The record gives the reactivity of an RNA of 177 nucleotides to 2A3 and DMS. For 2A3 the reverse transcriptase was SuperScript II with manganese.

RNA sequence: GGGAACGACUCGAGUAGAGUCGAAAAUGCACACCGCCUCGCUGUUCUUCCAGGACAGCAUCCAUCUGAGCGAGCGGUGGAUGCUCGUCGGCGGCGCGCGCUGGGUCCGCUACAGCCAGCUUGCCGAGAUGAGUAUCCCGUUCGCGGGAUACUCAUCAAAAGAAACAACAACAACAAC
Reactivity to 2A3 in 0.01 (KOAc 150mM, MgCl2 10mM, bicine 150mM(pH8.5), 24C), signal-to-noise 3, nucleotides 027 to 126: u100g010c020a010c000a000c020c020g010c040c020u070c100g010c010u010g030u090u070c050u240u060c090c060a020g000g050a000c010a020g010c000a010u010c020c000a040u000c060u130g050a040g060c050g030a000g010c030g010g000u000g000g000a020u020g000c000u050c110g100u010c020g000g040c000g000g000c020g000c000g000c010g000c040u010g000g020g080u070c040c060g100c120u110a130c020a020g010c000c020a010g010c010u140u260g000c040c010g080a090
Reactivity to DMS in 0.01 (KOAc 150mM, MgCl2 10mM, bicine 150mM(pH8.5), 24C), signal-to-noise 4, nucleotides 027 to 126: u010g010c050a090c040a050c010c010g020c050c040u000c130g000c010u000g000u020u010c060u000u010c260c100a120g010g010a050c010a040g020c020a080u000c030c030a090u000c060u000g000a100g020c030g000a030g000c050g010g020u000g000g010a040u000g020c000u000c080g000u000c010g000g010c030g010g010c010g020c150g030c150g030c010u000g000g010g000u000c070c100g000c090u000a110c040a070g000c040c160a130g000c020u000u010g010c020c020g010a160
Conditions: 150 mM KOAc, 10 mM MgCl2 and 150 mM bicine (pH 8.5), 24 C. Source: RMDB library OK2TRN, as collected in RNAgym.